[RMDB]
RNA sequence: GGGAACGACUCGAGUAGAGUCGAAAACCUGGUUUAGCGUUCCAGGCUAGCCCUAUCUAUCGGUCGAGAUGCGAGCGCUUAAGCUCAAAUUGAGUGGCUGAGUUAGUGGUGAACGUAUCCCUAUGUUAAAACGGUAGCUGCUUCGGCAGCUACCGAAGUUAGAUAUGUCGUUCGCGACAUAUCUAACAAAAGAAACAACAACAACAAC
Reactivity to DMS in 0.01 (KOAc 150mM, MgCl2 10mM, bicine 150mM(pH8.5), 24C), signal-to-noise 1, nucleotides 027 to 156: c000c030u030g000g010u000u000u020a100g030c090g040u010u000c010c010a050g000g050c010u000a300g010c010c000c000u000a020u010c070u010a110u000c020g050g030u000c020g010a300g000a050u000g010c300g010a010g040c040g030c210u010u000a110a230g020c020u000c020a040a250a070u000u000g030a270g030u000g040g010c000u010g000a040g010u000u000a030g010u010g000g010u000g010a100a090c050g010u000a150u000c010c020c010u000a090u010g000u010u000a040a050a060a150c030g050g000u000a010g010c000u000g010c010u000u000c300g080g060c000a000g000c020u010a010c000c000g000a000a060
Reactivity to 2A3 in 0.01 (KOAc 150mM, MgCl2 10mM, bicine 150mM(pH8.5), 24C), signal-to-noise 1, nucleotides 027 to 156: c000c000u010g010g040u030u030u150a110g000c070g030u050u000c020c000a000g000g030c040u020a030g000c000c000c000u020a040u000c000u010a190u030c000g010g000u010c030g010a020g000a110u010g010c020g020a000g000c020g030c210u180u260a120a060g010c000u010c000a010a030a060u020u070g030a070g030u230g030g000c010u000g000a000g020u010u010a060g010u130g140g010u040g020a080a020c050g060u060a140u060c010c000c020u050a110u150g080u040u140a050a120a020a010c000g000g010u000a000g010c000u000g020c010u020u010c110g120g000c030a010g000c000u000a000c000c000g000a000a010